[RMDB]
RNA sequence: GGGAACGACUCGAGUAGAGUCGAAAAGUCACGGUGAUCGGUCCGCUGAACACCACCGAGUCGAAGCACGCCGUCGCACGCCAGCCACCAACCGUCACCGACUCCGUCAGCGUCACGCCACUCACGCCGACGGCACCAGCUUCGGCUGGUGCCGUCGAAAAGAAACAACAACAACAAC
Reactivity to 2A3 in 0.01 (KOAc 150mM, MgCl2 10mM, bicine 150mM(pH8.5), 24C), signal-to-noise 1, nucleotides 027 to 126: g080u090c110a000c060g000g000u000g030a270u070c010g080g060u060c010c010g010c010u040g000a040a000c000a000c070c020a040c000c010g080a000g000u040c170g000a070a000g030c020a040c070g000c000c030g090u040c000g030c070a000c200g030c040c140a020g040c000c000a050c000c000a000a000c000c070g010u110c000a030c100c000g050a110c060u050c030c000g020u060c060a000g000c010g070u090c010a000c110g040c000c010a000c010u020c000a040c000g120c080